This 177-nucleotide RNA was probed chemically with 2A3 and DMS. The 2A3 profile rests on 25,833 reads. Source: RMDB library OK2TST, as collected in RNAgym. 2A3 adducts were read by reverse transcription with SuperScript II with manganese. The reactions ran in a buffer of 150 mM KOAc, 10 mM MgCl2 and 150 mM bicine (pH 8.5), at 24 C.
RNA sequence: GGGAACGACUCGAGUAGAGUCGAAAAGAGCGGGGUGGAUCGCCGCCAACAACUCAGCUGGGCUAAAUCCGGAGCUUAAGAACGCAUCCACCGUGCACACGAGGUUCCACAGUGCCACGCGAUCCAACGACUGAUAAAUAUUCGUAUUUAUCAGUCGAAAAGAAACAACAACAACAAC
Reactivity to 2A3 in 0.01 (KOAc 150mM, MgCl2 10mM, bicine 150mM(pH8.5), 24C), signal-to-noise 8, nucleotides 027 to 126: g090a010g000c010g000g040g010g030u010g010g010a020u030c080g020c020c000g010c020c010a060a060c030a030a030c030u050c050a040g030c080u120g010g010g000c060u180a070a060a050u050c030c030g050g030a010g010c010u090u050a080a030g020a090a010c030g000c020a030u000c030c000a020c010c030g200u030g000c030a030c000a010c070g060a040g030g060u060u030c020c010a050c020a040g050u050g060c010c000a030c030g020c020g010a020u030c020c010a020a060
Reactivity to DMS in 0.01 (KOAc 150mM, MgCl2 10mM, bicine 150mM(pH8.5), 24C), signal-to-noise 9, nucleotides 027 to 126: g000a130g040c020g020g000g010g040u000g010g000a020u000c060g050c020c030g010c300c030a080a090c100a070a060c040u000c040a070g010c080u010g010g010g010c080u010a060a090a130u010c050c040g010g000a040g010c040u000u010a090a100g000a080a300c260g000c030a030u000c020c020a100c050c040g020u000g000c040a080c070a110c110g010a090g000g000u000u000c020c010a070c110a110g000u000g000c060c060a050c080g010c030g000a050u000c020c020a070a220